Structure probing data (DMS and 2A3) for a 207-nucleotide construct.
The 2A3 profile rests on 6,207 reads.
The data come from the RNA Mapping Database (RMDB), library M2RFPK.
For 2A3 the reverse transcriptase was SuperScript II with manganese.
[RMDB]
RNA sequence: GGGAACGACUCGAGUAGAGUCGAAAAACGCGGAGUACGCUCCGCGACGACACUUCUUUCGACCCGCUAACCGAGACCUAUGGGUCGUUAAAUUACGUCUCUAUCUUACUCACAUAACAUCGCACAAAAAACGUGGUUCGGUUCGCCGAACCACGAACAUCUUAACUUACUUCGGUAAGUUAAGAUGAAAAGAAACAACAACAACAAC
Reactivity to DMS in 0.01 (KOAc 150mM, MgCl2 10mM, bicine 150mM(pH8.5), 24C), signal-to-noise 2, nucleotides 027 to 156: a120c010g030c000g030g010a010g050u000a120c290g040c010u000c000c000g010c010g010a030c080g010a110c080a120c090u000u000c110u010u000u000c000g000a030c010c000c010g010c100u000a110a100c070c070g010a130g010a120c040c040u000a100u000g000g010g030u000c030g020u000u000a020a060a050u010u000a040c040g020u000c000u020c020u000a100u000c070u000u010a090c050u000c030a100c110a070u000a040a130c070a110u000c050g020c060a120c100a000a060a060a040a030a140c000g030u000g000g030u000u000c000g070g000u000u010c290g000c000c000g020a010a020c010c000a000c000g000a010a050
Reactivity to 2A3 in 0.01 (KOAc 150mM, MgCl2 10mM, bicine 150mM(pH8.5), 24C), signal-to-noise 7, nucleotides 027 to 156: a000c010g000c010g000g010a010g010u060a030c150g040c100u000c000c000g020c000g000a010c020g010a000c010a050c080u120u110c030u080u230u140c000g010a010c020c000c020g010c180u200a030a030c040c040g010a010g010a030c000c020u040a090u210g000g000g000u000c000g020u010u030a010a020a010u150u080a010c010g000u000c010u000c020u030a100u110c060u090u120a120c050u090c090a050c040a150u200a160a050c020a130u140c100g060c140a070c110a070a060a030a050a070a040c050g010u010g000g000u000u000c000g000g020u030u040c140g030c050c000g010a010a000c000c000a000c000g000a000a000
For DMS the reverse transcriptase was MarathonRT.